The record gives the reactivity of an RNA of 177 nucleotides to DMS and 2A3. DMS adducts were read by reverse transcription with MarathonRT. 2A3 adducts were read by reverse transcription with SuperScript II with manganese. It was measured as part of the RMDB libraries RFM100 and RFMREP. The reactions ran in a buffer of 150 mM KOAc, 10 mM MgCl2 and 150 mM bicine (pH 8.5), at 24 C.
RNA sequence: GGGAACGACUCGAGUAGAGUCGAAAACGUGAGGAUGCGCCUCUGCCGUCUACCCCGCAAUAUGCGACUAUGGUGGAAGCGUGAAUCACGUGGAUAGCCGCUCACAUGGUAGAGCCUCGACAAGUAAGACUACCUAACGUUUCGACGUUAGGUAGUCAAAAGAAACAACAACAACAAC
Reactivity to DMS in 0.01 (KOAc 150mM, MgCl2 10mM, bicine 150mM(pH8.5), 24C), signal-to-noise 4, nucleotides 027 to 126: c010g000u020g000a020g010g020a150u030g010c000g010c020c040u000c000u010g010c000c000g030u010c200u030a090c300c170c140c020g010c020a140a110u020a050u040g000c020g000a040c190u000a030u020g000g050u000g020g000a020a030g010c000g010u000g000a300a160u000c000a010c000g000u000g010g000a300u000a060g010c040c010g010c010u000c070a120c070a070u010g010g030u000a030g010a100g020c020c010u010c050g000a110c140a140a070g010u010a090a130
Reactivity to 2A3 in 0.01 (KOAc 150mM, MgCl2 10mM, bicine 150mM(pH8.5), 24C), signal-to-noise 6, nucleotides 027 to 126: c000g010u010g000a000g020g020a040u120g030c000g010c000c000u030c000u000g010c010c000g020u020c070u120a200c020c040c020c010g020c010a100a250u210a130u300g000c000g000a010c030u050a050u130g000g020u020g000g010a000a000g010c000g000u110g020a000a040u000c000a000c000g010u000g000g020a030u090a030g040c030c050g000c010u050c020a150c010a120u150g070g010u110a070g010a000g030c000c010u050c020g080a070c040a130a050g110u100a150a040